Chemical mapping of a 177-nucleotide RNA with DMS and 2A3.

RNA sequence: GGGAACGACUCGAGUAGAGUCGAAAAACGGACCGAAAGUGGGUCAGACAGAGAAUGUUGCAUAACCAUCAAAUACACAACUCGCUGGUGAACGAGACAUUCGUGCUUGCUCCACUGUGUGUGUAAGACGGACAUAACCUUUCGAGGUUAUGUCCGUAAAAGAAACAACAACAACAAC
Reactivity to DMS in 0.01 (KOAc 150mM, MgCl2 10mM, bicine 150mM(pH8.5), 24C), signal-to-noise 3, nucleotides 027 to 126: a110c110g010g000a050c000c020g000a050a070a020g020u000g010g000g010u010c010a040g000a010c010a050g010a180g000a020a000u000g010u000u000g000c080a070u010a160a030c030c020a020u000c030a090a090a050u020a080c240a100c280a100a080c170u010c250g010c110u000g020g020u000g010a050a110c140g000a170g000a030c010a040u000u000c040g000u000g000c010u000u000g010c030u000c000c010a050c030u000g000u020g030u000g010u000g000u000a070a110g010
Reactivity to 2A3 in 0.01 (KOAc 150mM, MgCl2 10mM, bicine 150mM(pH8.5), 24C), signal-to-noise 2, nucleotides 027 to 126: a000c010g050g030a010c000c000g060a210a040a000g010u010g010g000g000u000c010a000g040a020c010a000g170a010g010a140a010u020g020u010u070g070c040a080u070a140a040c030c010a020u060c000a010a080a080u250a070c120a000c020a090a180c080u080c130g030c030u020g000g010u020g040a070a020c040g020a050g020a100c020a020u030u030c030g020u010g030c010u040u000g010c000u020c020c020a030c020u010g010u070g030u040g030u020g040u080a000a100g120

As a SHAPE reagent, 2A3 marks flexible, mostly unpaired nucleotides at the ribose 2'-OH.